[RMDB]
RNA sequence: GGGAACGACUCGAGUAGAGUCGAAAAUGGGCCGUGUGCUUAUCCAGGACAAGAUCUCCUUCUCUCCAACGUUGUUGCCAACUCAUGAUUCUCCUAACCUGUGCUUGGAGAGACGUGGACCCAGAGUAAAACGAAGGGUGCUUCGGCACCCUUCGAAUCGUAUUGACUAGUUCGCUAGUCAAUACGAAAAAGAAACAACAACAACAAC
Reactivity to DMS in 0.01 (KOAc 150mM, MgCl2 10mM, bicine 150mM(pH8.5), 24C), signal-to-noise 2, nucleotides 027 to 156: u000g020g000g060c010c000g010u030g040u000g010c000u000u000a070u010c040c030a080g020g010a170c050a100a110g020a200u000c020u000c030c010u000u000c050u010c050u010c020c010a090a090c140g030u000u010g020u010u010g040c020c050a090a050c040u070c000a100u000g030a140u010u000c000u010c000c020u020a060a070c040c050u010g020u000g030c060u000u020g030g020a050g010a020g030a020c050g010u010g030g000a040c020c010c040a240g020a150g040u010a060a030a060a210c020g000a030a010g000g000g060u010g010c010u000u000c240g070g000c000a010c000c010c000u000u000c000g020a010a040